An RNA of 207 nucleotides, treated with 2A3 and read out base by base. Source: RMDB library M2RFPK, as collected in RNAgym. 2A3 adducts were read by reverse transcription with SuperScript II with manganese.

RNA sequence: GGGAACGACUCGAGUAGAGUCGAAAACCUAUCCAAAAUGAGAUCCCAUCUUGCACACUGUGCUAAUUUGAGAUUCUCAUGCCUCCUGCUUGGAGAGAUCUGGACUAGAAGUCAGGGCAUCUGACUCAAUACAUUCGUCAGUUCGCUGACGAAUGAAUCCUUCUAUGGCCUUCGGGCCAUAGAAGGAAAAAGAAACAACAACAACAAC
Reactivity to 2A3 in 0.01 (KOAc 150mM, MgCl2 10mM, bicine 150mM(pH8.5), 24C), signal-to-noise 1, nucleotides 027 to 156: c000c010u030a020u100c000c030a120a000a040a100u010g010a000g000a000u000c000c000c000a000u030c010u000u050g000c010a030c070a140c260u260g010u010g090c110u200a030a060u010u000u030g050a050g010a010u260u070c000u000c010a000u020g010c000c010u000c000c000u010g090c140u100u300g010g000a010g000a070g030a030u050c090u050g010g010a000c020u070a160g030a150a000g110u000c010a000g050g000g180c070a030u100c090u000g000a000c000u000c030a000a090u090a070c020a010u000u000c000g000u020c010a000g010u030u130c240g060c110u000g000a000c000g000a000a000u000g000a000a050
Reactivities are given for positions 27 through 156. The RNA was probed in 150 mM KOAc, 10 mM MgCl2 and 150 mM bicine (pH 8.5) at 24 C.